The data come from the RNA Mapping Database (RMDB), library OK2TRN. The record gives the reactivity of an RNA of 177 nucleotides to DMS and 2A3. The reactions ran in a buffer of 150 mM KOAc, 10 mM MgCl2 and 150 mM bicine (pH 8.5), at 24 C. For 2A3 the reverse transcriptase was SuperScript II with manganese.
RNA sequence: GGGAACGACUCGAGUAGAGUCGAAAAGGUGCGGCGGAUCGCAACCGAUUUGGCCAACGCCCGCCGUCGCUUUGAACAUCCGGCGAUGCUCUCCGCUGACCGGGCCUUUGCGGCGGUACCGGCGGCGCUGACGCCUUACAUUCGUGUAAGGCGUCAGAAAAGAAACAACAACAACAAC
Reactivity to DMS in 0.01 (KOAc 150mM, MgCl2 10mM, bicine 150mM(pH8.5), 24C), signal-to-noise 3, nucleotides 027 to 126: g010g020u010g020c070g020g030c030g020g010a030u000c050g030c150a200a140c110c020g000a190u010u010u000g030g020c020c050a090a160c120g000c190c000c020g010c000c000g030u000c040g000c030u000u010u000g000a100a080c150a110u010c010c030g000g020c030g000a110u000g000c060u000c100u010c160c070g000c000u000g010a060c020c010g000g010g010c070c020u000u000u000g020c100g040g020c200g000g010u000a030c050c040g000g010c040g000g000c060g030
Reactivity to 2A3 in 0.01 (KOAc 150mM, MgCl2 10mM, bicine 150mM(pH8.5), 24C), signal-to-noise 2, nucleotides 027 to 126: g030g000u030g020c050g050g010c020g050g070a060u060c030g000c080a050a040c060c030g020a040u110u080u230g100g000c030c010a070a030c010g000c000c030c000g000c000c000g010u080c020g000c010u060u020u030g060a060a020c030a090u060c030c010g030g020c130g050a040u090g000c010u040c020u050c070c070g000c020u040g050a220c000c000g000g040g010c010c000u090u080u080g050c070g050g000c010g010g000u030a110c010c030g020g000c020g020g040c010g000